Structure probing data (2A3 and DMS) for a 177-nucleotide construct.
The RNA was probed in 150 mM KOAc, 10 mM MgCl2 and 150 mM bicine (pH 8.5) at 24 C.
For 2A3, 2,726 sequencing reads were counted.
Source: RMDB library M2PK50, as collected in RNAgym.
For 2A3 the reverse transcriptase was SuperScript II with manganese.
[RMDB]
RNA sequence: GGGAACGACUCGAGUAGAGUCGAAAAGGGUUGUAGUUCGCUACAACCCAAAGUAAAGAGCAAGGACCAGCUCAAUAAAGGUCCAAAAAGUACGAAAGUACAAAAUCGUGAAGUUCGCUUCACGAAACGUUAUUAGUGUCUUCGGACACUAAUAACGAAAAGAAACAACAACAACAAC
Reactivity to 2A3 in 0.01 (KOAc 150mM, MgCl2 10mM, bicine 150mM(pH8.5), 24C), signal-to-noise 1, nucleotides 027 to 126: g030g000g000u000u010g000u000a000g000u020u050c160g010c070u000a000c000a010a020c000c000c000a000a020a000g000u010a020a090a050g020a000g000c020a050a150g000g010a010c000c010a000g010c010u020c000a020a000u090a010a020a000g030g000u000c000c000a120a020a010a040a000g000u000a000c010g050a190a020a020g000u000a020c050a030a000a020a220u050c010g000u010g020a000a000g010u030u100c190g040c120u010u000c000a000c000g000a020a010a000
Reactivity to DMS in 0.01 (KOAc 150mM, MgCl2 10mM, bicine 150mM(pH8.5), 24C), signal-to-noise 2, nucleotides 027 to 126: g010g000g000u000u010g020u000a010g010u000u020c160g010c000u000a020c000a010a000c000c000c000a000a010a040g010u000a060a100a150g010a010g020c010a040a170g030g000a020c000c010a110g000c020u000c040a110a180u000a010a020a160g020g010u000c010c000a030a070a010a060a090g000u000a000c010g000a100a060a170g010u000a010c020a090a080a070a110u010c020g010u000g000a000a000g000u000u010c220g000c000u000u000c000a020c000g000a010a040a070